Chemical mapping of a 177-nucleotide RNA with DMS and 2A3.
RNA sequence: GGGAACGACUCGAGUAGAGUCGAAAAGAUAUGGAUCUACCUAGGCCAGGACGAAUUCGGAAACGAACUAUCCUGGAACUACCUAGAGUAGAUCCUAAGUCAAAACAUCAGCGUUCGCGCUGAUGAACAAAAGAUGGCAGUUCGCUGCCAUCUUUUGAAAAGAAACAACAACAACAAC
Reactivity to DMS in 0.01 (KOAc 150mM, MgCl2 10mM, bicine 150mM(pH8.5), 24C), signal-to-noise 2, nucleotides 027 to 126: g010a020u010a300u020g000g000a000u000c000u000a020c000c000u010a000g000g000c000c000a000g000g000a000c100g020a110a130u010u000c000g020g000a110a090a210c010g010a010a030c090u000a300u000c000c000u000g000g010a030a020c060u010a300c010c010u000a010g000a220g000u010a000g000a000u000c000c000u000a020a060g000u000c010a060a060a100a220c010a000u000c000a000g000c000g000u000u020c220g020c000g010c000u000g000a000u010g000a080a190
Reactivity to 2A3 in 0.01 (KOAc 150mM, MgCl2 10mM, bicine 150mM(pH8.5), 24C), signal-to-noise 1, nucleotides 027 to 126: g000a000u070a070u110g000g010a000u030c010u020a040c000c020u000a010g020g010c020c010a020g040g020a010c070g110a140a300u030u000c020g000g030a040a060a100c010g000a020a000c060u030a040u020c020c010u030g010g060a040a030c000u150a010c040c010u010a040g050a060g050u010a000g010a000u000c000c000u000a030a000g030u000c040a070a080a000a170c000a000u010c000a010g060c020g050u060u160c300g030c000g000c100u030g010a000u010g010a070a000
Values cover nucleotides 27 to 126.
DMS adducts were read by reverse transcription with MarathonRT.
The 2A3 profile rests on 1,367 reads.
Conditions: 150 mM KOAc, 10 mM MgCl2 and 150 mM bicine (pH 8.5), 24 C.
2A3 adducts were read by reverse transcription with SuperScript II with manganese.